[RMDB]
Source information
The data come from the RNA Mapping Database (RMDB), library OK1LIB. This 177-nucleotide RNA was probed chemically with DMS and 2A3. The reactions ran in a buffer of 150 mM KOAc, 10 mM MgCl2 and 150 mM bicine (pH 8.5), at 24 C. For 2A3, 1,045 sequencing reads were counted. For DMS, 966 sequencing reads were counted.

RNA sequence: GGGAACGACUCGAGUAGAGUCGAAAAUUCACAUGCAGGACGAUAUUCACUGUCCGGCCCUCAAUAUGACUAAAUAUCGACCUAAUUCUUACGGGACACGGCGAAUCUCACAAGCGAAUUGAAAAACAUAGCUUCUCACAUUCGUGUGAGAAGCUAUAAAAGAAACAACAACAACAAC
Reactivity to DMS in 0.01 (KOAc 150mM, MgCl2 10mM, bicine 150mM(pH8.5), 24C), signal-to-noise 1, nucleotides 027 to 126: u040u000c050a160c080a090u010g040c110a030g000g000a110c080g010a100u020a130u000u010c110a050c300u000g000u000c000c100g000g010c060c020c000u020c020a130a060u000a020u000g000a000c060u020a000a000a080u040a000u000c010g000a170c050c000u000a020a170u030u000c040u000u060a050c140g040g030g000a040c160a110c050g050g020c000g000a080a130u000c000u000c000a150c030a130a080g000c010g000a050a110u020u040g000a040a050a000a060a100c100
Reactivity to 2A3 in 0.01 (KOAc 150mM, MgCl2 10mM, bicine 150mM(pH8.5), 24C), signal-to-noise 2, nucleotides 027 to 126: u050u040c000a030c040a030u030g100c020a040g000g000a000c000g000a010u030a130u030u020c140a150c140u090g100u000c000c010g020g000c010c000c000u120c040a090a130u100a170u260g030a020c020u100a040a150a000u010a100u050c000g000a050c020c030u050a040a090u190u110c000u100u040a020c030g010g000g000a010c050a000c030g030g000c020g050a000a000u000c000u070c000a040c010a090a000g040c060g080a040a090u000u080g020a130a130a000a000a000c090